[RMDB]
RNA sequence: GGGAACGACUCGAGUAGAGUCGAAAAGAUAAGCUACCAGCAAAAAGGAACCGAUUCCCACCAAGUUCGGAAAGAGAUACCGGGCGAGGCGCUGAAGAAAGAAUCUCGCUUCAGACACCCCAAGGACAUGACCUUAAAAUGUUCGCAUUUUAAGGAACAUCCGUUGCUGAUUCGUCAGCAACGGAUGAAAAGAAACAACAACAACAAC
Reactivity to 2A3 in 0.01 (KOAc 150mM, MgCl2 10mM, bicine 150mM(pH8.5), 24C), signal-to-noise 1, nucleotides 027 to 156: g040a060u090a050a030g020c010u050a080c040c020a000g030c040a050a060a120a000a120g050g000a030a020c000c050g020a080u000u010c020c000c000a010c000c020a040a040g000u000u010c020g000g030a170a130a010g030a080g010a000u050a100c000c000g000g040g020c020g040a040g000g080c090g020c030u000g010a020a030g020a010a190a010g050a070a160u040c020u080c210g000c000u030u040c000a060g040a100c020a050c050c000c000c020a050a040g050g020a050c050a110u140g090a070c000c000u040u010a000a000a000a000u010g020u020u020c160g040c140a000u000u000u000u000a000a000g040g000a000a020

Background: This 207-nucleotide RNA was probed chemically with 2A3. It was measured as part of the RMDB library M2RFPK. The 2A3 profile rests on 498 reads.